Chemical mapping of a 207-nucleotide RNA with 2A3. Values cover nucleotides 27 to 156. For 2A3 the reverse transcriptase was SuperScript II with manganese. The reactions ran in a buffer of 150 mM KOAc, 10 mM MgCl2 and 150 mM bicine (pH 8.5), at 24 C.
[RMDB]
RNA sequence: GGGAACGACUCGAGUAGAGUCGAAAAAGACGGAAACCCAUCGACUGUCACCAGAUGCUGCAUCACCUGAUCACUGAUGGCUCAACGGUAUCCGGCCGUACAACUGAAUACUUGUAGCUGCCUUUUGAAAAGGAGUUCAUCUUCGGAUGAACUCCAACCCUAAUGUCGACUUCGGUCGACAUUAGGGAAAAGAAACAACAACAACAAC
Reactivity to 2A3 in 0.01 (KOAc 150mM, MgCl2 10mM, bicine 150mM(pH8.5), 24C), signal-to-noise 2, nucleotides 027 to 156: a010g040a000c050g000g000a050a080a010c010c010c030a060u120c040g080a070c030u050g010u080c020a010c030c020a030g030a110u100g030c060u060g030c010a020u020c020a050c020c040u080g060a090u060c010a010c090u040g010a060u050g040g000c040u040c090a030a080c010g010g020u010a080u010c040c030g050g000c030c000g030u080a070c010a100a010c040u090g030a080a070u070a100c030u060u080g020u050a000g010c020u000g000c010c000u130u200u070u170g080a100a150a000a060g000g000a000g000u000u000c000a000u000c000u030u040c090g120g000a000u000g000a000a000c000u040c000c000a000a000